[RMDB]
RNA sequence: GGGAACGACUCGAGUAGAGUCGAAAAGUACCAGCAGAGAUGCGGAUGAUAACAUGUGAUGUUAUCCCAUGACUUAUAAGAACGUCGUAUGGGAACAGUGCAGCGUCAUUGAGGUCGAGAAACAAGGAGAUGCUACCUAAUUCGUUAGGUAGCAUCUAAAAGAAACAACAACAACAAC
Reactivity to DMS in 0.01 (KOAc 150mM, MgCl2 10mM, bicine 150mM(pH8.5), 24C), signal-to-noise 6, nucleotides 027 to 126: g000u040a140c010c000a110g020c060a070g010a130g020a090u000g010c060g000g010a040u000g010a050u010a070a060c070a090u010g010u020g020a040u010g000u000u010a080u000c000c020c010a030u020g010a040c010u010u020a150u040a100a110g020a110a110c150g010u000c010g010u040a040u000g020g000g020a050a070c080a050g030u010g000c030a030g000c040g000u010c020a050u000u030g010a100g000g010u000c020g000a100g000a100a050a010c080a060a130g000g000
Reactivity to 2A3 in 0.01 (KOAc 150mM, MgCl2 10mM, bicine 150mM(pH8.5), 24C), signal-to-noise 2, nucleotides 027 to 126: g000u000a020c000c000a000g020c010a010g020a000g020a020u040g000c000g050g010a000u020g000a010u030a060a040c050a030u030g060u050g050a070u010g000u020u040a040u020c000c000c000a010u030g000a000c010u020u050a040u010a140a090g050a070a010c020g000u020c000g010u010a030u000g030g000g000a010a030c010a000g030u010g000c010a010g000c010g020u000c020a000u000u030g020a030g010g010u010c000g000a010g010a050a060a000c040a020a010g030g010